[RMDB]
RNA sequence: GGGAACGACUCGAGUAGAGUCGAAAAUUUAAGAGCGUAGAUGUCUCUGUCACGAUACGAGUAAGUGACUCUCGUGUACUACUGACGAAUGAGACAGAGACAUUUAUGCUCAGUGUCUGUCAAGGAAUGGACCUAGCACAUUCGUGUGCUAGGUCCAAAAAGAAACAACAACAACAAC
Reactivity to DMS in 0.01 (KOAc 150mM, MgCl2 10mM, bicine 150mM(pH8.5), 24C), signal-to-noise 1, nucleotides 027 to 126: u000u000u000a180a070g000a020g000c000g070u000a000g000a000u020g020u000c000u020c000u000g010u000c000a100c050g000a070u000a120c000g000a060g020u000a020a110g000u010g010a110c060u000c170u000c180g000u000g000u000a030c040u000a080c030u000g010a120c080g000a080a050u000g010a110g010a010c000a000g010a010g000a010c010a010u000u000u000a000u000g010c000u000c010a010g010u010g000u000c010u000g000u010c140a080a120g010g000a050a100